[RMDB]
RNA sequence: GGGAACGACUCGAGUAGAGUCGAAAAGCACACGGCCGGAUCGGUACUGCGUACAGACAUGGCCGCGUACUCUCAGCGCCACGAUCUAGCGCUGUAGGCGCGUACGAGAUACUCUGCGAUCCGAGAGCGUUAUCUGGGGUUUCGACCCCAGAUAACGAAAAGAAACAACAACAACAAC
Reactivity to DMS in 0.01 (KOAc 150mM, MgCl2 10mM, bicine 150mM(pH8.5), 24C), signal-to-noise 2, nucleotides 027 to 126: g020c090a070c040a040c010g000g000c030c030g000g000a110u000c030g000g010u000a030c030u000g000c250g030u000a020c080a030g010a040c120a180u020g010g030c050c020g040c000g050u030a060c040u010c080u000c000a120g010c000g000c000c040a080c080g000a080u020c120u040a120g000c070g010c020u010g000u010a030g050g010c060g010c070g000u010a060c150g000a100g000a100u000a040c050u020c040u000g020c050g000a060u000c020c030g020a100g000a080g010